Structure probing data (DMS and 2A3) for a 207-nucleotide construct. DMS adducts were read by reverse transcription with MarathonRT. The RNA was probed in 150 mM KOAc, 10 mM MgCl2 and 150 mM bicine (pH 8.5) at 24 C.
RNA sequence: GGGAACGACUCGAGUAGAGUCGAAAAGGUUUCUCAGAGCAUCUGACCCUUGAGUUCUGAAUUACUGAGGAUAAGAUAGCUAGGGACAGUGGUGAAGUCCACACUAAGGGGAAGAAGUAGCAAGUACAAAUGAUGAGCAGAGAGAGGAGUCAACACACUUUUAUAUAGGUUUCGACCUAUAUAAAAGAAAAGAAACAACAACAACAAC
Reactivity to DMS in 0.01 (KOAc 150mM, MgCl2 10mM, bicine 150mM(pH8.5), 24C), signal-to-noise 2, nucleotides 027 to 156: g020g020u010u000u020c020u000c040a110g020a080g010c020a100u000c030u010g010a120c020c000c020u000u000g020a150g000u010u010c080u010g030a160a060u000u000a060c030u010g000a020g030g000a040u000a050a060g000a040u000a060g010c010u000a110g020g010g000a050c040a090g010u010g020g040u000g000a050a180g010u010c020c020a040c050a030c090u010a080a040g000g000g020g010a100a090g010a080a090g000u010a080g030c030a040a090g020u010a150c080a070a090a160u000g020a120u000g000a120g050c060a090g000a110g000a090g010a060g020g020a080g010u010c030a050a060c050a060c080a160
Reactivity to 2A3 in 0.01 (KOAc 150mM, MgCl2 10mM, bicine 150mM(pH8.5), 24C), signal-to-noise 5, nucleotides 027 to 156: g040g000u040u110u010c040u010c030a040g020a010g030c020a080u030c030u050g050a090c010c010c000u020u050g170a070g020u080u060c100u180g070a110a090u130u080a050c040u040g010a010g020g000a030u050a140a040g020a040u050a040g010c040u050a020g010g000g010a030c030a040g030u030g040g010u040g060a080a010g070u050c020c000a020c000a000c030u060a040a050g000g000g000g020a020a020g020a040a010g040u070a020g010c070a070a030g050u060a090c060a070a100a050u100g040a040u050g020a010g020c030a020g020a010g000a000g020a000g050g000a000g000u040c020a090a020c010a000c000a010

For 2A3, 3,383 sequencing reads were counted. For 2A3 the reverse transcriptase was SuperScript II with manganese. It was measured as part of the RMDB library OK3TST. Reactivities are given for positions 27 through 156.